RNA sequence: GGGAACGACUCGAGUAGAGUCGAAAAGAACUUCAACACCAACAACAGCAGGGCUUGACUGUCUGAAUACGUGGUCUUCGAGUAUCCGAAACCGACAAGGACGCACAAUUUUAUCUAGCACAGUCUCUUGUUGUGCGCGCUCUUGCUCAUCAACAUAGUAGUGACUUAUCUUCGGAUAAGUCACUACAAAAGAAACAACAACAACAAC
Reactivity to 2A3 in 0.01 (KOAc 150mM, MgCl2 10mM, bicine 150mM(pH8.5), 24C), signal-to-noise 3, nucleotides 027 to 156: g010a030a010c050u100u040c080a050a050c020a050c050c010a040a050c020a050a030c020a050g000c020a010g030g000g040c050u100u120g040a060c010u010g040u140c010u050g090a090a020u110a080c100g020u040g010g000u020c050u020u040c030g020a020g010u060a120u000c030c010g010a110a050a020c010c030g040a010c040a030a010g000g010a010c010g000c040a010c010a020a030u050u030u100u150a150u180c130u120a040g020c030a030c020a110g100u070c060u020c010u110u110g010u050u010g010u020g000c020g000c010g020c010u060c000u080u080g010c060u040c020a100u140c010a020a100c020a110u210a040
Reactivity to DMS in 0.01 (KOAc 150mM, MgCl2 10mM, bicine 150mM(pH8.5), 24C), signal-to-noise 1, nucleotides 027 to 156: g030a060a100c000u000u010c060a080a100c040a090c000c040a030a080c050a180a040c000a020g000c040a070g020g030g070c110u000u010g000a090c020u010g000u000c020u010g010a060a060u000a060c110g000u000g010g010u020c060u000u000c050g020a180g020u000a060u000c040c020g020a100a110a120c040c000g010a070c040a040a040g010g020a030c030g000c020a040c050a070a070u000u010u020u010a070u020c050u010a090g010c040a040c060a090g000u010c020u000c040u000u010g020u020u000g030u000g020c000g030c040g060c080u030c040u000u000g000c040u000c060a110u000c050a060a090c020a070u000a190